[RMDB]
RNA sequence: GGGAACGACUCGAGUAGAGUCGAAAACAGCAAUUAUUCGUAAUUGCUGAAUGGCGGACCCAGCGCGGAAGGAGCGCGCAGGACUCCUUCGCCGCCUUUAAAUAAGCAGGUACUUCGGUACCUGCAAGUAAUAGGGGACUUUCGAGUCCCCUAUUACAAAAGAAACAACAACAACAAC
Reactivity to 2A3 in 0.01 (KOAc 150mM, MgCl2 10mM, bicine 150mM(pH8.5), 24C), signal-to-noise 3, nucleotides 027 to 126: c010a000g010c000a000a010u020u000a010u060u140c170g050u050a010a020u020u010g000c000u000g000a020a110u170g010g020c010g000g020a040c010c000c020a060g090c130g000c050g150g040a060a050g020g020a010g050c050g000c010g040c120a010g050g120a160c040u020c010c010u010u020c040g000c000c000g000c000c000u110u160u130a170a180a100u190a100a030g000c010a000g000g000u000a010c000u040u110c200g070g010u000a000c010c010u010g000c000a000a000
Reactivity to DMS in 0.01 (KOAc 150mM, MgCl2 10mM, bicine 150mM(pH8.5), 24C), signal-to-noise 3, nucleotides 027 to 126: c010a000g010c010a010a000u000u000a020u000u010c180g040u000a000a010u000u000g010c010u020g000a030a050u020g010g020c000g000g010a170c040c000c020a130g010c160g000c120g020g010a030a020g000g010a020g000c060g010c190g010c170a070g020g000a210c000u000c020c020u000u000c010g010c020c000g000c010c020u000u020u000a030a090a080u010a100a100g020c000a000g010g010u000a000c000u000u020c150g020g020u000a000c000c010u000g000c000a000a030
The record gives the reactivity of an RNA of 177 nucleotides to 2A3 and DMS. Values cover nucleotides 27 to 126. The 2A3 profile rests on 3,127 reads. As a SHAPE reagent, 2A3 marks flexible, mostly unpaired nucleotides at the ribose 2'-OH. For DMS, 2,826 sequencing reads were counted.